Notes
Chemical mapping of a 207-nucleotide RNA with 2A3. The RNA was probed in 150 mM KOAc, 10 mM MgCl2 and 150 mM bicine (pH 8.5) at 24 C.
RNA sequence: GGGAACGACUCGAGUAGAGUCGAAAAGAACAAACGUACGAGUCGACAAAACGCGAGAUGCGUAUUUGGAUGAGGACACCAGCCUUAAUUGGCAGACACGGGAAGUGUUGGUGCUUGACCAACCUGAUGUGAACAGAAGUAGUCACCAUAUGCUGAAGACCAACCCAUAGUUCGCUAUGGGUUGGUCAAAAGAAACAACAACAACAAC
Reactivity to 2A3 in 0.01 (KOAc 150mM, MgCl2 10mM, bicine 150mM(pH8.5), 24C), signal-to-noise 1, nucleotides 027 to 156: g080a000a040c060a000a030a020c050g120u190a040c040g050a000g040u080c040g020a020c040a070a040a100a000c000g010c060g090a110g010a150u210g040c010g040u040a070u080u130u000g040g030a050u050g040a020g020g020a000c040a000c030c020a020g000c000c000u100u160a080a080u090u020g000g020c000a000g030a040c050a020c010g040g010g100a050a030g160u090g000u130u030g000g000u100g050c120u030u080g000a030c000c020a000a000c120c080u180g020a020u140g000u000g000a000a110c000a010g100a070a000g060u120a000g010u030c040a070c050c000a060u000a060u130g110c080u100g070a020a000
For 2A3 the reverse transcriptase was SuperScript II with manganese. For 2A3, 357 sequencing reads were counted.